[RMDB]
The data come from the RNA Mapping Database (RMDB), library M2PK50. This 177-nucleotide RNA was probed chemically with 2A3 and DMS. The reactions ran in a buffer of 150 mM KOAc, 10 mM MgCl2 and 150 mM bicine (pH 8.5), at 24 C.

RNA sequence: GGGAACGACUCGAGUAGAGUCGAAAAUCCUUCCUUUUCGAAGGAAGGACAGUGCACAGUCUUCGCAUCUGAGAAUCACACAACAGCCGUGUCUAUGCGAGGUUUUAAUCAAGUUCGCUUGAUUAAAUUAUAAUCGAUCUUUCGAGAUCGAUUAUAAAAAAGAAACAACAACAACAAC
Reactivity to 2A3 in 0.01 (KOAc 150mM, MgCl2 10mM, bicine 150mM(pH8.5), 24C), signal-to-noise 3, nucleotides 027 to 126: u010c020c000u000u000c000c000u060u050u060u090c230g090a000a000g000g000a010a010g000g010a000c020a010g150u150g010c080a040c020a140g070u000c020u040u000c020g000c030a020u000c070u120g050a030g080a220a130u160c020a010c010a000c010a140a190c020a110g130c080c060g040u020g030u000c020u050a020u040g000c000g000a020g010g030u000u070u000u060a000a000u010c000a000a020g000u030u030c170g060c050u000u010g010a000u010u030a010a040a000
Reactivity to DMS in 0.01 (KOAc 150mM, MgCl2 10mM, bicine 150mM(pH8.5), 24C), signal-to-noise 5, nucleotides 027 to 126: u000c000c000u010u000c000c000u000u000u010u010c160g020a010a010g010g000a010a010g010g000a000c070a040g010u000g020c110a150c120a090g010u000c020u000u000c030g010c020a040u000c120u010g000a090g010a120a110u010c100a050c050a050c080a060a090c180a120g020c110c080g010u000g010u000c050u000a030u000g000c020g010a040g000g010u010u000u000u000a000a000u000c000a000a010g000u000u010c180g010c000u000u000g010a020u000u000a000a010a070
The DMS profile rests on 8,532 reads.